[RMDB]
RNA sequence: GGGAACGACUCGAGUAGAGUCGAAAACAAUUAGAAUGCCUUGGCACAGGCUGUGCAGGCAUGCCAUUGGUGGCAUACCUGUGCUUUUUACAGUAGGUGACCAUAGGAAAAAUCCACCAUAAAUAGAUCUACCCCUUUGAAAGCAUUUCAGUGCUGAGAGUCAUACGCAUUUCGAUGCGUAUGACUCAAAAGAAACAACAACAACAAC
Reactivity to 2A3 in 0.01 (KOAc 150mM, MgCl2 10mM, bicine 150mM(pH8.5), 24C), signal-to-noise 1, nucleotides 027 to 156: c010a020a130u290u170a120g100a280a050u140g050c020c000u000u000g030g000c020a080c030a090g240g130c010u020g000u020g000c000a020g000g040c000a000u010g000c020c010a140u150u150g300g010u120g070g070c000a000u000a000c000c000u000g010u070g060c000u140u220u090u070u230a010c000a020g000u020a020g300g170u020g000a110c000c080a190u210a040g000g120a120a200a000a090a000u120c130c040a020c000c000a060u130a300a120a050u080a070g150a100u030c000u020a080c000c000c000c000u090u060u190g090a060a080a000g020c010a010u040u090u250c100a020g120u020g010c020u000g000a020